[RMDB]
RNA sequence: GGGAACGACUCGAGUAGAGUCGAAAAGAUGAGUGGGAGAGAAGAGCCAUCGCGGUGUUCGGUCACCGCCCGUAUAUCGGAGUGUCGGCCAAUAUUGUGGCCGCCGCCCAACUGCCGGGGUGGGACGUAAAAACUUACUUUUCGAAGUAAGUUUUUAAAAAGAAACAACAACAACAAC
Reactivity to 2A3 in 0.01 (KOAc 150mM, MgCl2 10mM, bicine 150mM(pH8.5), 24C), signal-to-noise 7, nucleotides 027 to 126: g040a050u100g010a010g050u080g020g030g000a060g000a010g020a120a020g010a010g040c030c010a050u050c040g000c030g030g040u030g040u060u120c100g030g170u050c040a040c150c010g030c000c000c010g070u090a120u020a040u230c070g000g010a170g050u030g010u020c010g000g000c000c010a060a040u280a200u210u290g100u050g080g000c000c000g000c000c000g000c000c000c000a030a050c050u090g050c030c020g040g000g010g040u090g000g000g010a000c020g040
Reactivity to DMS in 0.01 (KOAc 150mM, MgCl2 10mM, bicine 150mM(pH8.5), 24C), signal-to-noise 9, nucleotides 027 to 126: g000a070u000g000a070g020u000g000g000g010a080g000a090g010a090a080g000a100g010c060c070a060u010c100g010c030g000g010u000g010u000u000c250g010g000u000c020a060c020c030g010c040c050c030g010u000a100u010a090u010c100g000g000a120g020u000g010u000c020g010g000c000c010a040a140u010a150u010u000g020u000g010g010c000c000g010c050c020g000c010c010c010a070a090c120u010g010c090c070g010g010g010g020u000g000g000g000a050c130g000